[RMDB]
Annotation: This 177-nucleotide RNA was probed chemically with DMS and 2A3. Conditions: 150 mM KOAc, 10 mM MgCl2 and 150 mM bicine (pH 8.5), 24 C. DMS adducts were read by reverse transcription with MarathonRT. The data come from the RNA Mapping Database (RMDB), library OK2TRN. For 2A3, 242,436 sequencing reads were counted.
RNA sequence: GGGAACGACUCGAGUAGAGUCGAAAAGGCUGCAACGUAGUCAUAAGGGACGUACCUGGUCUUGUUAUGUCUUAUGACUAGUCGUAAUAUGUAACAAGACCAGUUGCAUGUUACGACAUUUGUAGCGCUACAUCUUUCUAUUCGUAGAGAGAUGUAGAAAAGAAACAACAACAACAAC
Reactivity to DMS in 0.01 (KOAc 150mM, MgCl2 10mM, bicine 150mM(pH8.5), 24C), signal-to-noise 9, nucleotides 027 to 126: g000g010c000u000g010c010a010a040c300g010u000a050g010u000c000a060u000a030a050g010g000g010a070c090g020u000a040c090c030u000g000g000u000c050u000u000g000u000u000a030u000g000u000c020u000u000a010u000g000a020c040u000a090g010u000c000g010u000a000a010u000a000u000g010u000a010a000c010a050a070g010a070c170c130a010g000u000u000g010c000a050u000g010u000u000a020c030g000a020c010a110u000u000u000g010u000a010g010c010g010
Reactivity to 2A3 in 0.01 (KOAc 150mM, MgCl2 10mM, bicine 150mM(pH8.5), 24C), signal-to-noise 9, nucleotides 027 to 126: g070g000c000u000g000c010a030a030c090g160u100a070g010u030c010a020u030a070a060g150g040g060a020c040g020u030a030c010c020u050g050g070u060c040u070u050g040u050u030a050u090g030u010c000u010u010a010u010g010a020c020u040a070g050u000c000g000u000a000a000u010a010u010g010u010a000a020c050a110a030g060a090c010c010a010g000u000u000g000c010a020u070g020u030u020a020c030g010a010c020a050u030u030u020g010u010a000g000c010g000